RNA sequence: GGGAACGACUCGAGUAGAGUCGAAAACAACACACUUGGUCCAUCGGACCAUGGCGCAGGCAGCUCCUGGCCUGGCAAGACCUUUGACCACGAAGCCUCCGUUUUGGCCGGGGAUGCGUCGUGGUCACGCGGUAUUCUCCUUCGGGAGAAUACCGCGAAAAGAAACAACAACAACAAC
Reactivity to 2A3 in 0.01 (KOAc 150mM, MgCl2 10mM, bicine 150mM(pH8.5), 24C), signal-to-noise 2, nucleotides 027 to 126: c060a000a080c030a000c030a030c140u060u050g030g000u000c010c000a240u080c300g000g070a040c040c000a010u030g020g000c100g000c050a030g000g000c040a030g010c000u020c050c010u100g040g000c010c010u000g110g000c000a000a000g160a160c020c080u070u050u100g010a000c000c030a000c000g000a000a000g000c000c010u010c020c030g020u000u020u160u300g080g000c090c040g000g000g000g000a020u060g000c050g040u000c000g000u010g010g000u000c000a000

Background:
Structure probing data (2A3) for a 177-nucleotide construct. Values are in units of 0.01, from 0 to 300, in steps of 10. It was measured as part of the RMDB library RFM100.